[RMDB]
RNA sequence: GGGAACGACUCGAGUAGAGUCGAAAACGAAGCAAGCCCCACCUUCUCUCUGGACACCAUCCCCUCCAUCCCCUAGUAUGGGCCCAUGAGCCAGUGGAUAUGUCUUCUCACCUGCAUGGACGGCAGGGUGUGGUACAGUCUUCGGACUGUACCACACAAAAGAAACAACAACAACAAC
Reactivity to DMS in 0.01 (KOAc 150mM, MgCl2 10mM, bicine 150mM(pH8.5), 24C), signal-to-noise 2, nucleotides 027 to 126: c130g010a080a060g010c070a090a050g000c030c010c010c060a080c120c000u000u000c010u000c050u000c050u000g010g000a090c070a080c050c000a090u010c070c020c020c020u000c030c060a110u010c060c000c010c070u010a090g020u020a130u010g020g010g000c100c010c020a090u000g000a110g040c040c030a120g050u000g000g000a080u010a060u000g010u010c020u000u000c030u000c040a270c030c000u000g000c010a080u000g030g030a090c110g000g040c010a040g020g030